[RMDB]
Structure probing data (2A3 and DMS) for a 177-nucleotide construct. 2A3 adducts were read by reverse transcription with SuperScript II with manganese. The reactions ran in a buffer of 150 mM KOAc, 10 mM MgCl2 and 150 mM bicine (pH 8.5), at 24 C. Reactivities are rounded to 0.1 and cut off at 0 and 3.

RNA sequence: GGGAACGACUCGAGUAGAGUCGAAAAAAAACAAUAGUGAUUCCGUAAGUAGCGGCGAGCGAACGCGGAUUAGCCCAAACCGAUAAUGUUCCGGCAUUGUCGGGGUUGUAGGACUACAAUAUCGAGAAGUUUAAUCAUAGUUCGCUAUGAUUAAACUAAAAGAAACAACAACAACAAC
Reactivity to 2A3 in 0.01 (KOAc 150mM, MgCl2 10mM, bicine 150mM(pH8.5), 24C), signal-to-noise 5, nucleotides 027 to 126: a000a000a000a000c190a050a080u170a050g160u110g030a070u100u020c000c000g020u010a020a010g000u010a010g000c000g120g060c190g070a030g000c000g000a000a000c010g000c000g000g000a000u010u010a000g010c000c000c020a020a030a030c000c000g000a000u000a000a000u010g020u070u120c110c140g120g000c010a000u010u010g010u000c000g000g000g000g000u030u050g040u080a030g020g060a010c010u060a020c080a090a130u080a070u280c110g040a030g070a240
Reactivity to DMS in 0.01 (KOAc 150mM, MgCl2 10mM, bicine 150mM(pH8.5), 24C), signal-to-noise 8, nucleotides 027 to 126: a020a040a030a050c100a080a080u010a060g010u010g010a090u010u000c000c000g000u000a020a040g010u000a140g010c010g010g040c270g010a300g000c010g000a080a090c220g000c010g010g000a030u000u010a050g010c010c010c020a060a100a070c010c010g000a010u000a010a010u000g000u000u000c230c140g000g000c000a000u000u000g010u000c000g000g000g000g000u010u010g000u000a050g000g000a070c070u010a040c140a070a040u020a070u020c070g000a100g000a150